Annotation: Chemical mapping of a 207-nucleotide RNA with 2A3 and DMS.
RNA sequence: GGGAACGACUCGAGUAGAGUCGAAAAUACGGUUAAUGUUGCCACCUGAGGCAUUAACAAGAGACUAGUAGGUUAGCUGCGUUGUGUUAGCCUUGCUGGCUGGCGCGACAUCGCGGCGAAUUUUAAAUAAGUCAGCUAUAGGUGUAGAGCUGCAUGUAGAUAUGUGUUAGUUCGCUAACACAUAUCUAAAAGAAACAACAACAACAAC
Reactivity to 2A3 in 0.01 (KOAc 150mM, MgCl2 10mM, bicine 150mM(pH8.5), 24C), signal-to-noise 9, nucleotides 027 to 156: u080a010c020g010g000u000u000a000a000u010g000u010u020g010c020c020a010c010c000u010g010a010g000g010c010a000u000u010a010a000c030a040a020g070a010g060a120c120u130a080g150u040a010g040g020u040u030a010g000c000u000g000c000g000u010u000g000u010g030u070u140a010g000c000c010u040u240g020c040u020g000g000c000u000g000g000c000g000c000g010a010c000a020u030c010g000c000g010g000c010g010a000a010u090u150u070u190a040a040a020u040a010a000g010u020c010a000g000c010u050a070u060a110g060g010u060g040u080a050g030a020g070c040u040g020c060a070u130g080u100
Reactivity to DMS in 0.01 (KOAc 150mM, MgCl2 10mM, bicine 150mM(pH8.5), 24C), signal-to-noise 4, nucleotides 027 to 156: u010a130c030g010g020u000u000a020a030u010g010u000u000g020c020c030a050c010c000u030g010a300g010g020c000a030u000u000a030a010c010a090a080g010a170g020a100c070u000a100g020u000a060g010g020u000u000a060g000c000u000g010c010g010u000u000g010u000g010u000u010a080g020c000c000u000u000g010c130u010g010g000c010u000g010g000c000g010c050g030a030c030a030u000c000g030c020g030g000c010g000a030a000u000u010u010u000a020a070a110u000a050a070g010u000c010a050g000c040u000a120u000a080g020g020u000g010u000a150g010a150g040c010u000g020c020a090u000g020u000